[RMDB]
RNA sequence: GGGAACGACUCGAGUAGAGUCGAAAACUAUGCAGAUUCGUCUGCAUAGAGACCCGAUGAAGCGGCACUUACACAGCAUCAUACACGUAAGAAGUGCAAUAAAGGGACGAGGGUUCGCCCUCGUCAAUUCGUUACGAGUGUUCGCACUCGUAACGAAAAAAGAAACAACAACAACAAC
Reactivity to 2A3 in 0.01 (KOAc 150mM, MgCl2 10mM, bicine 150mM(pH8.5), 24C), signal-to-noise 1, nucleotides 027 to 126: c000u000a000u010g000c000a030g000a050u050u120c090g100u010c080u010g010c000a010u000a000g000a000g030a050c010c000c010g000a180u260g100a120a020g130c060g070g000c080a000c050u010u100a030c120a000c000a020g080c010a030u020c000a050u120a120c040a030c120g040u000a080a000g090a100a010g080u080g040c040a010a070u200a150a050a040g140g010g000a000c000g000a000g000g040g030u000u040c240g090c000c000c000u000c010g000u020c030a000a070
Reactivity to DMS in 0.01 (KOAc 150mM, MgCl2 10mM, bicine 150mM(pH8.5), 24C), signal-to-noise 1, nucleotides 027 to 126: c000u000a000u000g030c020a000g000a010u020u010c180g020u000c000u000g010c000a000u000a000g000a100g010a230c000c000c010g020a100u000g000a170a120g020c100g020g000c020a020c020u000u000a050c110a030c080a130g010c060a020u020c150a060u010a030c150a060c090g000u000a100a030g020a100a020g000u000g020c020a050a060u020a060a140a050g000g010g000a010c020g000a020g000g020g010u000u000c300g010c000c000c010u000c020g010u000c000a020a020